[RMDB]
RNA sequence: GGGAACGACUCGAGUAGAGUCGAAAAGAAGACACUGGGGGUGUUUGUGUUGGUCGGCUGUGGGGUCCCUCCCAAGGGAAACCGUUAGUCACCCUGGCGCUGGCUGGAUGUGAGGCCACAAACGCCAUCUAAUCCACUCGUUCGCGAGUGGAUUAGAAAAAGAAACAACAACAACAAC
Reactivity to DMS in 0.01 (KOAc 150mM, MgCl2 10mM, bicine 150mM(pH8.5), 24C), signal-to-noise 1, nucleotides 027 to 126: g010a130a080g010a070c070a030c060u010g000g000g010g010g040u000g010u020u010u010g000u010g020u000u010g010g010u000c090g030g010c020u010g060u000g020g010g010g020u000c010c000c000u000c120c100c150a190a070g000g030g000a030a020a030c040c010g020u010u010a050g010u000c060a100c030c020c080u000g000g000c030g030c140u000g000g000c000u000g010g000a100u010g020u000g000a200g000g000c040c030a050c100a040a060a060c040g000c030c030a120